RNA sequence: GGGAACGACUCGAGUAGAGUCGAAAACGUCUGCCCUUUGAGCAAGGUGAAGACUUUGAAUUCCAGUUCACAAAGUUGGAAGUAAGCAUGGGACCUGGAAUCUUUGUCCAAGGAUUAAUACAAGUGUUCCAGGGCCCUGAGCCUCUCUGUGAUCACACCAGCCAAGUAUGUUCGCAUACUUGGCUGGAAAAGAAACAACAACAACAAC
Reactivity to 2A3 in 0.01 (KOAc 150mM, MgCl2 10mM, bicine 150mM(pH8.5), 24C), signal-to-noise 1, nucleotides 027 to 156: c020g010u010c020u080g120c000c000c010u020u000u060g180a040g000c080a030a000g000g000u160g090a090a010g020a020c000u030u030u010g090a030a030u040u000c010c010a050g010u030u000c000a010c010a020a040a000g100u270u110g070g020a090a010g080u220a160a000g070c080a140u190g020g000g000a010c000c010u010g020g010a010a010u050c020u050u060u100g050u010c070c070a110a160g050g010a180u260u290a270a050u300a190c000a050a000g000u010g020u190u000c000c000a020g000g000g000c010c000c000u000g030a000g100c000c000u010c000u000c010u010g010u000g010a010u100c050a000c030a070